[RMDB]
RNA sequence: GGGAACGACUCGAGUAGAGUCGAAAACAGGAGGUUGGCUUAGAAGCAGCCACCCCUUCAAAGAGUGCGUAACAGCUCACUGGUCGAGUGGACAUGCGCCGACAAUACACGGGGCUAAGCUCUGAACGGUUUCAUGUAUAUUCGUAUACAUGAAACCAAAAGAAACAACAACAACAAC
Reactivity to 2A3 in 0.01 (KOAc 150mM, MgCl2 10mM, bicine 150mM(pH8.5), 24C), signal-to-noise 9, nucleotides 027 to 126: c050a010g020g060a050g040g020u160u130g030g000c010u060u060a100g050a290a030g120c070a000g000c000c000a010c000c000c000c000u040u050c040a080a100a010g070a020g010u110g020c060g080u090a100a060c030a080g010c010u010c020a090c040u090g060g070u100c050g040a070g040u050g010g070a050c030a130u150g030c020g010c010c000g020a030c030a040a070u120a130c060a020c080g010g000g000g000c000u050a060a030g010c000u000c010u030g050a090a030c060
Reactivity to DMS in 0.01 (KOAc 150mM, MgCl2 10mM, bicine 150mM(pH8.5), 24C), signal-to-noise 8, nucleotides 027 to 126: c120a090g000g000a060g000g010u010u010g020g010c010u000u020a110g020a130a150g030c290a060g010c020c020a100c030c020c010c000u010u000c130a080a100a110g010a050g010u000g010c030g000u010a060a080c210a140g010c010u000c000a050c060u010g020g020u020c110g000a060g020u000g000g010a090c130a100u020g000c030g010c010c020g010a040c090a080a100u040a090c160a070c080g000g000g010g000c040u010a070a100g000c030u000c000u000g000a070a110c200
An RNA of 177 nucleotides, treated with 2A3 and DMS and read out base by base. The reactions ran in a buffer of 150 mM KOAc, 10 mM MgCl2 and 150 mM bicine (pH 8.5), at 24 C. Reactivities are rounded to 0.1 and cut off at 0 and 3.